[RMDB]
RNA sequence: GGGAACGACUCGAGUAGAGUCGAAAAGAUGUGCGCCUCUGAUCCCAGACACGGACGCUACUUGACGGCGUGCGCCAUGUUCCGUGGCCGCAUGUCCACGAAGGAGGUCGAUGAGCAGAUGCUCAACCCACGGAGCAUGGUUCGCCAUGCUCCGUGGAAAAGAAACAACAACAACAAC
Reactivity to DMS in 0.01 (KOAc 150mM, MgCl2 10mM, bicine 150mM(pH8.5), 24C), signal-to-noise 1, nucleotides 027 to 126: g010a040u010g010u010g000c030g050c030c010u000c020u000g000a090u000c010c000c090a240g010a180c110a060c160g000g030a040c080g030c000u000a070c090u000u000g020a180c240g040g040c080g060u000g000c040g020c010c010a050u000g010u000u000c100c230g010u000g000g000c140c010g020c070a000u000g010u000c000c010a160c210g000a080a060g040g010a090g010g010u040c020g010a210u010g030a020g030c030a130g000a270u010g060c010u010c030a100a120c180
Reactivity to 2A3 in 0.01 (KOAc 150mM, MgCl2 10mM, bicine 150mM(pH8.5), 24C), signal-to-noise 1, nucleotides 027 to 126: g030a030u130g040u060g080c020g060c070c000u000c020u010g010a150u080c000c020c020a000g070a000c090a000c010g100g040a060c050g050c130u070a040c020u110u120g000a080c080g000g000c030g000u040g000c030g000c000c010a030u100g140u250u050c070c060g000u010g000g000c070c040g020c000a060u120g030u040c020c020a020c040g050a020a020g090g020a050g090g020u040c070g100a260u090g030a010g000c060a030g120a260u220g040c000u040c030a050a120c000
Structure probing data (DMS and 2A3) for a 177-nucleotide construct. The 2A3 profile rests on 795 reads. It was measured as part of the RMDB library OK2TRN. The reactions ran in a buffer of 150 mM KOAc, 10 mM MgCl2 and 150 mM bicine (pH 8.5), at 24 C.